[RMDB]
RNA sequence: GGGAACGACUCGAGUAGAGUCGAAAAAAGACCAACGAUCACCCGGCCAACCUCGUAGCGCAGCGCAUCCGUCGGUUCUUUGACGGUGCAUGCACCUUCGAUCUGCAUCCUGCGAACUGCAUGAUGGACAAGAACAAUCAGCUGGUGCUGACCGACCCGUUGGACGUUUUUUCGAAAACGUCCAACGAAAAGAAACAACAACAACAAC
Reactivity to 2A3 in 0.01 (KOAc 150mM, MgCl2 10mM, bicine 150mM(pH8.5), 24C), signal-to-noise 2, nucleotides 027 to 156: a010a000g130a030c030c040a000a040c060g030a060u070c050a020c040c010c000g020g000c040c030a050a080c050c020u050c040g010u030a040g010c000g000c150a060g010c050g000c090a070u220c040c000g030u030c000g020g190u300u000c080u200u120u110g000a020c010g010g000u000g010c000a010u060g010c000a030c000c010u050u030c030g140a130u040c030u050g000c000a030u010c000c030u000g000c020g070a170a140c070u130g000c010a070u070g010a030u040g000g090a050c100a090a040g030a050a040c040a060a130u140c040a040g000c020u040g000g070u020g040c040u010g010a020c000c000g020a070c000c030